About this RNA
Chemical mapping of a 177-nucleotide RNA with 2A3 and DMS. Reactivities are rounded to 0.1 and cut off at 0 and 3.
[RMDB]
RNA sequence: GGGAACGACUCGAGUAGAGUCGAAAAGAGAUGAUCAGCCGCUCGCGCGCCGAAGGCUUCGGCGACGAGGUCAAGCGCCGCAUCCUGAUCGGCACCUACGUCCUGUCGCACGGCUACUACGACGCCACUAAUGCUAGCAGUUCGCUGCUAGCAUUAGAAAAGAAACAACAACAACAAC
Reactivity to 2A3 in 0.01 (KOAc 150mM, MgCl2 10mM, bicine 150mM(pH8.5), 24C), signal-to-noise 3, nucleotides 027 to 126: g040a000g000a010u070g000a060u120c030a010g010c020c020g000c030u040c020g130c000g010c010g000c030c010g020a070a030g300g090c110u090u020c010g000g000c000g010a020c000g010a020g000g020u050c120a190a030g020c040g000c160c030g000c010a010u020c000c010u010g010a050u020c000g000g010c020a140c100c000u030a030c030g240u050c010c010u020g000u050c000g030c040a070c070g020g010c020u040a040c020u050a050c120g150a030c050g030c020c000a020
Reactivity to DMS in 0.01 (KOAc 150mM, MgCl2 10mM, bicine 150mM(pH8.5), 24C), signal-to-noise 4, nucleotides 027 to 126: g020a100g000a070u000g000a060u000c050a100g020c040c030g000c040u000c040g020c090g030c010g050c010c020g030a050a130g020g020c260u000u000c010g020g020c040g000a080c010g020a030g010g000u010c060a080a130g010c070g010c020c180g000c040a050u010c020c030u000g010a230u000c010g020g000c020a080c110c020u010a040c080g010u000c010c040u000g020u000c010g020c070a100c060g000g010c010u000a100c130u010a090c120g000a070c100g000c040c060a210
Source: RMDB library OK2TST, as collected in RNAgym. The RNA was probed in 150 mM KOAc, 10 mM MgCl2 and 150 mM bicine (pH 8.5) at 24 C.